[RMDB]
RNA sequence: GGGAACGACUCGAGUAGAGUCGAAAACGUAAUGAAUCGUGAAGACCCCCGUUGAUAAGGAAUAAGGGCAGGUCACGUUGCUAUUGGUUAUCUAUACCAGUCUGCUUGGUUGCCCGGAGCUAUAAAACGUAUACGAUUAGUUCGCUAAUCGUAUACGAAAAGAAACAACAACAACAAC
Reactivity to DMS in 0.01 (KOAc 150mM, MgCl2 10mM, bicine 150mM(pH8.5), 24C), signal-to-noise 9, nucleotides 027 to 126: c030g010u010a100a100u020g010a140a080u010c030g010u000g020a100a100g010a190c100c030c000c050c060g020u010u010g010a090u020a090a080g000g000a070a060u020a130a200g000g000g010c020a030g000g010u030c020a020c080g000u000u000g000c170u010a030u000u000g000g010u000u020a110u020c200u010a070u020a040c010c010a020g010u000c030u000g000c010u000u000g000g000u000u000g010c010c010c010g010g010a110g010c090u010a060u020a040a050a080a110
Reactivity to 2A3 in 0.01 (KOAc 150mM, MgCl2 10mM, bicine 150mM(pH8.5), 24C), signal-to-noise 9, nucleotides 027 to 126: c010g020u060a060a180u200g150a060a080u170c010g000u030g060a060a020g110a100c000c000c000c000c010g020u040u060g090a140u080a170a050g080g040a090a060u100a060a060g020g000g000c010a010g050g070u100c000a010c030g010u020u020g030c090u050a020u040u020g010g000u050u050a100u150c120u090a070u080a080c000c000a000g010u010c020u010g010c000u030u030g030g050u030u020g010c000c000c010g000g000a020g010c060u060a040u080a210a050a020a010